[RMDB]
RNA sequence: GGGAACGACUCGAGUAGAGUCGAAAAGCUGGCUUCAUGUUGAGCAACGAUUUGCUGAUUGUGACCGGCGCGCUGGUCGGUUCGUCAGGCGCGAUCCUGUCUUACAUUAUGUGUAAAGCGAUGAACCAGCAUUAAAUAGUUUCGACUAUUUAAUGCUAAAAGAAACAACAACAACAAC
Reactivity to 2A3 in 0.01 (KOAc 150mM, MgCl2 10mM, bicine 150mM(pH8.5), 24C), signal-to-noise 9, nucleotides 027 to 126: g020c010u020g030g010c020u060u030c040a050u080g060u110u160g130a020g010c020a050a060c110g170a180u080u070u090g010c010u040g040a140u130u150g040u050g040a030c010c000g000g000c010g000c010g000c030u070g010g060u070c080g010g000u030u030c020g030u020c020a020g030g000c010g000c010g020a020u040c000c000u030g050u100c030u040u040a020c010a050u070u190a130u300g100u010g030u070a070a090a030g070c050g040a040u040g010a020a020c010c010
Reactivity to DMS in 0.01 (KOAc 150mM, MgCl2 10mM, bicine 150mM(pH8.5), 24C), signal-to-noise 9, nucleotides 027 to 126: g010c010u010g000g010c100u040u010c030a020u000g010u010u010g000a050g010c020a030a070c300g010a160u020u000u000g000c010u010g000a070u010u020g020u010g000a080c020c020g000g010c020g010c030g010c010u010g000g010u010c120g010g000u000u000c010g010u000c010a230g000g000c010g000c020g000a080u010c010c010u000g000u020c070u010u010a020c030a040u010u040a100u040g020u000g010u000a010a040a110g020c140g000a020u010g000a030a020c020c020
An RNA of 177 nucleotides, treated with 2A3 and DMS and read out base by base. Reactivities are rounded to 0.1 and cut off at 0 and 3. For DMS the reverse transcriptase was MarathonRT. It was measured as part of the RMDB library OK1LIB. 2A3 adducts were read by reverse transcription with SuperScript II with manganese.